[RMDB]
Annotation
Source: RMDB library OK1LIB, as collected in RNAgym. Chemical mapping of a 177-nucleotide RNA with 2A3 and DMS. For 2A3 the reverse transcriptase was SuperScript II with manganese. Reactivities are given for positions 27 through 126.

RNA sequence: GGGAACGACUCGAGUAGAGUCGAAAAUGAGGUUUUUGCAGGCACUUUUGAAAAAGUACACUGGGUGGUAUUCGGGAUUAAUAUGGCCGAACAGACUUUGCCAGACCGUCACCCACACGCGACGGAGCGUCUAGUCAUGGUUCGCCAUGACUAGACGAAAAGAAACAACAACAACAAC
Reactivity to 2A3 in 0.01 (KOAc 150mM, MgCl2 10mM, bicine 150mM(pH8.5), 24C), signal-to-noise 4, nucleotides 027 to 126: u120g010a060g050g030u040u080u040u110u160g040c000a010g060g000c040a030c100u040u030u120u140g170a130a090a000a010a000g050u030a040c040a040c030u040g020g040g020u060g000g030u030a150u030u110c030g000g010g020a030u080u080a100a210u170a110u160g090g000c030c020g040a040a000c010a020g130a040c040u070u130u110g030c000c000a020g000a020c020c010g020u020c000a030c010c020c010a030c000a000c030g060c030g070a020c060g020g020a060g040
Reactivity to DMS in 0.01 (KOAc 150mM, MgCl2 10mM, bicine 150mM(pH8.5), 24C), signal-to-noise 3, nucleotides 027 to 126: u050g020a070g020g020u000u000u010u000u010g000c030a070g000g020c100a040c010u000u000u000u040g020a050a060a040a040a020g010u010a030c070a130c060u000g000g010g010u000g000g020u030a150u030u000c040g010g010g000a070u020u030a040a070u070a110u010g030g000c000c040g000a000a090c190a140g000a040c120u010u000u030g010c000c060a090g020a170c140c020g000u000c010a100c040c000c020a070c160a050c090g000c050g000a100c050g000g010a120g030